[RMDB]
RNA sequence: GGGAACGACUCGAGUAGAGUCGAAAAUGUCACGUAAAGAGAUGCAGAGUGGCCAUCCUCUUUCUGCCACCUUCAGCCCCAAACAGGGCGAUGACAAACCGCUCACUGGCCCCUUGCACACCAUAGGACAGUACUCUAGAUUCGUCUAGAGUACUGUAAAAGAAACAACAACAACAAC
Reactivity to DMS in 0.01 (KOAc 150mM, MgCl2 10mM, bicine 150mM(pH8.5), 24C), signal-to-noise 7, nucleotides 027 to 126: u000g000u000c040a050c110g020u000a060a080a070g000a090g020a070u010g000c060a060g010a090g020u000g010g010c080c060a100u000c070c030u000c050u000u000u000c040u010g020c040c030a050c040c030u010u000c090a140g010c020c000c010c060a040a060a130c230a100g000g000g000c010g010a050u010g000a100c090a060a080a100c080c050g010c030u010c030a080c100u010g010g010c030c020c020c040u000u000g010c040a050c090a090c060c060a080u000a100g000g010
Reactivity to 2A3 in 0.01 (KOAc 150mM, MgCl2 10mM, bicine 150mM(pH8.5), 24C), signal-to-noise 5, nucleotides 027 to 126: u070g020u020c020a000c090g090u120a020a090a040g080a010g020a030u070g040c060a030g050a040g130u070g030g010c040c020a080u060c010c040u030c000u010u080u000c040u030g020c010c010a040c020c010u050u070c040a040g020c020c000c000c020a090a230a020c040a030g020g000g000c020g040a070u080g020a020c030a020a090a010c020c010g040c030u040c030a060c050u020g030g020c000c000c000c000u020u080g000c040a050c000a020c070c030a070u060a040g060g030
This 177-nucleotide RNA was probed chemically with DMS and 2A3. Conditions: 150 mM KOAc, 10 mM MgCl2 and 150 mM bicine (pH 8.5), 24 C.